The record gives the reactivity of an RNA of 307 nucleotides to 2A3. 2A3 adducts were read by reverse transcription with SuperScript II with manganese. The RNA was probed in 150 mM KOAc, 10 mM MgCl2 and 150 mM bicine (pH 8.5) at 24 C.

[RMDB]
RNA sequence: GGGAACGACUCGAGUAGAGUCGAAAACAGAGAACUUCGGUUCUCUGACAGUUGUGCGUGAGCACAACUGAAGACAGGCGCGUGAGCGCCUGUCAGUGAGCGUACGCGCUCACAACUUAUAAUCUACGGAUUAUAAGAGCGUAAUUCGUGAGAAUUACGCAAGUGCAUUCGUUCGCGAAUGCACAGCCUCCAUCGUGAGAUGGAGGCAACGCAGGCUACGGCCUGCGAAAUUCAGGUGAUUUGCUACCUUUAAGUGCAGCUAGAAUAGAUCGCGGUUCGCCGCGAUCAAAAGAAACAACAACAACAAC
Reactivity to 2A3 in 0.01 (KOAc 150mM, MgCl2 10mM, bicine 150mM(pH8.5), 24C), signal-to-noise 2, nucleotides 027 to 266: c010a000g010a000g000a000a020c010u080u140c290g140g010u010u000c000u000c000u000g010a030c000a010g010u020u020g000u010g010c010g050u080g070a060g010c000a010c000a010a000c000u000g010a040a010g000a000c010a000g010g020c000g020c020g060u070g120a080g030c010g000c000c000u000g000u000c000a010g010u000g000a000g010c000g000u030a060c250g010c000g000c170u010c000a000c000a010a000c000u000u000a000u000a000a000u000c000u010a040c260g100g000a000u000u000a000u000a000a040g060a060g010c000g000u010a000a010u010u000c000g000u060g100a080g000a010a000u010u000a000c000g000c010a020a030g000u000g000c000a010u000u000c000g040u020u090c300g020c000g140a010a000u000g000c010a000c000a000g000c000c020u000c000c010a000u010c020g040u030g140a100g000a020u010g020g000a000g000g010c000a000a000c000g000c010a000g010g020c010u050a070c300g140g000c010c000u010g030c000g000a060a000a000u220u190c080a000g000g000u020g040a250u100u060u070g000c000u000a010c010c020u100u170u300a020a010g010u030g000c010a010g020c040u110a020g160a160a110u270a060